[RMDB]
RNA sequence: GGGAACGACUCGAGUAGAGUCGAAAAGAAAGUGCUUAAACCGUGUGGACUCGAAUGGCUAUAACCACAGAAACCUGAGGAAACAGGAAGCCACAACGCAAGCCAUGUGGUUGGCACACGGAAGAAAAGCUGAUAAAUACUUCGGUAUUUAUCAGCUAAAAGAAACAACAACAACAAC
Reactivity to DMS in 0.01 (KOAc 150mM, MgCl2 10mM, bicine 150mM(pH8.5), 24C), signal-to-noise 5, nucleotides 027 to 126: g010a060a100a100g010u010g000c020u000u040a070a040a040c010c010g030u010g060u000g000g000a040c010u000c040g000a180a180u000g010g020c020u000a060u010a100a090c120c140a080c230a080g000a090a090a130c040c010u000g010a140g020g040a110a110a180c040a050g000g010a120a030g010c010c010a090c110a080a130c090g000c090a050a050g000c010c000a020u000g010u010g000g020u000u000g000g000c010a020c020a040c050g000g010a090a070g010a070a030a050
Reactivity to 2A3 in 0.01 (KOAc 150mM, MgCl2 10mM, bicine 150mM(pH8.5), 24C), signal-to-noise 8, nucleotides 027 to 126: g170a040a070a010g030u030g020c050u090u140a130a000a020c000c010g010u020g010u000g020g060a090c010u000c030g070a110a050u050g010g000c000u020a030u090a230a080c050c030a070c040a140g130a090a080a030c010c000u030g020a090g040g270a150a070a060c020a000g000g010a010a020g010c010c010a040c050a160a040c030g020c070a070a010g000c000c000a010u020g010u010g020g000u010u020g000g010c010a000c010a010c030g070g080a080a020g040a060a180a000